The record gives the reactivity of an RNA of 207 nucleotides to 2A3 and DMS. The reactions ran in a buffer of 150 mM KOAc, 10 mM MgCl2 and 150 mM bicine (pH 8.5), at 24 C. DMS adducts were read by reverse transcription with MarathonRT. Values are in units of 0.01, from 0 to 300, in steps of 10.
RNA sequence: GGGAACGACUCGAGUAGAGUCGAAAAUCAGUUGAGACUUCCAUGACAAGAGAGCUUGACCUUGUUGGUCGAGAGAGAAACAGGGGAUGAAGAAGAAACAGAGUAGGGAUGAGAAGAAGGAGAGUCUAUAGAUAUUUGGUGGCAUCGGAGAAGACGACUAGUACGCAUUAUUCGUAAUGCGUACUAGAAAAGAAACAACAACAACAAC
Reactivity to 2A3 in 0.01 (KOAc 150mM, MgCl2 10mM, bicine 150mM(pH8.5), 24C), signal-to-noise 7, nucleotides 027 to 156: u060c010a010g060u030u050g070a050g020a080c020u070u020c030c020a070u070g040a050c060a110a020g040a000g000a010g080c020u030u040g020a020c000c010u100u170g100u130u140g090g010u000c010g000a010g000a000g010a000g020a020a110a010c050a040g010g020g000g000a010u060g030a020a040g030a040a000g020a030a060a020c060a030g040a010g050u060a040g020g040g000a020u060g030a070g020a100a010g010a010a020g030g010a030g010a000g010u000c010u050a070u040a060g050a050u070a070u110u100u100g040g000u000g000g000c020a030u050c040g020g010a050g010a070a030g040a020c030g020a010
Reactivity to DMS in 0.01 (KOAc 150mM, MgCl2 10mM, bicine 150mM(pH8.5), 24C), signal-to-noise 4, nucleotides 027 to 156: u020c020a080g010u010u010g010a160g020a150c040u020u010c010c030a140u000g000a160c090a090a120g020a130g020a120g010c000u000u000g020a040c030c020u000u000g020u010u000g030g030u010c030g020a060g020a090g010a120g000a090a070a080c070a090g060g000g000g010a090u000g010a070a070g010a100a060g010a090a080a090c100a080g020a100g010u000a070g050g020g000a090u010g000a110g020a060a090g010a080a090g010g000a090g010a110g030u000c040u000a110u000a070g020a120u000a050u010u000u010g020g020u000g020g030c030a080u020c050g020g010a080g010a060a090g010a090c080g020a180